[RMDB]
RNA sequence: GGGAACGACUCGAGUAGAGUCGAAAAACGUGGUGGACCUCACUGUGGUAGGCCGGGGCGUCGCAACCCGGCCUGGAGCAGCCACGAUCCUUGGCGUACAACAUGAUUCGCUGCGCCGGGGAAGCUAGCCCUAAUGGGAAUUCGUUCCCAUUAGGGCAAAAGAAACAACAACAACAAC
Reactivity to 2A3 in 0.01 (KOAc 150mM, MgCl2 10mM, bicine 150mM(pH8.5), 24C), signal-to-noise 2, nucleotides 027 to 126: a000c000g010u010g010g000u010g030g000a070c020c010u050c020a060c060u140g010u080g110g180u110a000g000g000c010c000g000g010g010g000c080g110u240c060g040c100a040a010c010c000c000g000g000c030c000u000g000g010a030g000c010a010g000c010c010a000c010g000a020u040c000c000u000u020g000g000c010g000u020a010c050a090a000c060a240u300g040a300u210u140c120g020c150u010g000c010g000c020c000g000g020g000g000a040a020g050c100u100a030
Reactivity to DMS in 0.01 (KOAc 150mM, MgCl2 10mM, bicine 150mM(pH8.5), 24C), signal-to-noise 2, nucleotides 027 to 126: a130c030g030u000g050g030u000g000g000a260c130c010u000c190a300c080u010g010u000g000g010u000a000g000g010c000c010g000g000g000g020c140g000u000c140g000c160a080a090c020c000c000g010g000c000c000u000g000g010a210g000c040a230g010c000c010a010c030g000a170u000c000c000u000u020g000g000c000g000u020a050c030a060a050c100a140u000g010a160u000u020c110g010c140u000g010c030g040c000c000g000g020g000g000a020a090g020c150u000a090